Annotation:
Structure probing data (DMS and 2A3) for a 177-nucleotide construct. For DMS the reverse transcriptase was MarathonRT. It was measured as part of the RMDB library TTRDEL. As a SHAPE reagent, 2A3 marks flexible, mostly unpaired nucleotides at the ribose 2'-OH. Values cover nucleotides 27 to 126. Values are in units of 0.01, from 0 to 300, in steps of 10.
[RMDB]
RNA sequence: GGGAACGACUCGAGUAGAGUCGAAAAGAUAUGGAUCCCAUGACAUGUAAGUCGGAAACGAUGGUUACAACAGCAUGAGGAUCCUAAGUCAAAUCCGAAAUAGGACGUUCGCGUCCUAUUUCGGAAAGUGGACAUGUAGGUUCGCCUACAUGUCCACAAAAGAAACAACAACAACAAC
Reactivity to DMS in 0.01 (KOAc 150mM, MgCl2 10mM, bicine 150mM(pH8.5), 24C), signal-to-noise 2, nucleotides 027 to 126: g000a020u000a300u000g020g000a020u000c000c000c010a010u000g000a050c130a240u000g010u000a030a140g000u010c020g000g010a050a080a130c030g000a020u000g010g010u000u000a030c040a030a110c300a200g000c030a020u000g000a130g050g000a000u000c000c000u000a000a130g010u000c040a030a120a140u000c000c010g030a000a010a000u000a000g000g010a020c000g050u000u030c280g020c010g000u000c000c000u000a000u000u010u000c000g000g000a000a000a070
Reactivity to 2A3 in 0.01 (KOAc 150mM, MgCl2 10mM, bicine 150mM(pH8.5), 24C), signal-to-noise 2, nucleotides 027 to 126: g020a010u090a010u090g000g000a000u030c010c040c000a000u030g110a070c040a040u040g010u020a030a010g020u000c020g000g040a020a050a010c040g020a020u060g110g300u190u060a030c030a210a010c000a160g060c000a000u030g030a270g180g000a000u000c000c010u020a070a000g030u020c040a110a010a140u020c000c000g000a020a000a010u010a000g000g020a000c000g060u040u050c300g050c000g130u010c000c000u000a000u000u000u010c000g000g000a000a000a000

Notes:
For 2A3, 2,971 sequencing reads were counted. Conditions: 150 mM KOAc, 10 mM MgCl2 and 150 mM bicine (pH 8.5), 24 C.